[RMDB]
The record gives the reactivity of an RNA of 177 nucleotides to 2A3 and DMS. For DMS, 8,454 sequencing reads were counted. For DMS the reverse transcriptase was MarathonRT.
RNA sequence: GGGAACGACUCGAGUAGAGUCGAAAACGGCGGCCGCGGCGUCAUCUGGAGCGGGGUGGUGUCCAAGGUCAUCGUGCCCGCGGUGGUGGCCGCGCUGCUGGCCACCCUGGUCGGGGCGAUCGGCACCCGAUAAUCCACGGUUCGCCGUGGAUUAUCGAAAAGAAACAACAACAACAAC
Reactivity to 2A3 in 0.01 (KOAc 150mM, MgCl2 10mM, bicine 150mM(pH8.5), 24C), signal-to-noise 7, nucleotides 027 to 126: c020g040g000c020g010g020c020c010g010c050g020g000c000g030u040c010a040u010c020u080g140g070a130g070c080g010g000g000g000u020g000g010u030g030u030c030c030a080a070g040g010u020c000a000u010c000g020u060g300c000c000c000g000c020g020g020u270g010g000u000g010g000c010c010g000c060g090c100u210g020c050u070g010g000c000c000a020c000c000c000u080g050g040u170c010g000g000g000g010c000g010a030u080c050g040g000c030a040c000c010
Reactivity to DMS in 0.01 (KOAc 150mM, MgCl2 10mM, bicine 150mM(pH8.5), 24C), signal-to-noise 3, nucleotides 027 to 126: c060g000g000c100g020g000c020c000g000c260g010g000c030g020u010c050a020u010c010u020g020g030a100g020c090g020g020g010g000u000g010g020u000g000u030c000c020a060a300g010g000u000c040a070u000c010g010u010g010c000c000c000g030c040g010g010u020g020g020u000g010g000c000c010g000c060g040c090u030g000c040u020g040g030c020c000a020c020c020c030u000g000g000u030c030g000g000g010g010c010g020a020u010c100g000g010c020a120c030c040
Source information: Values cover nucleotides 27 to 126.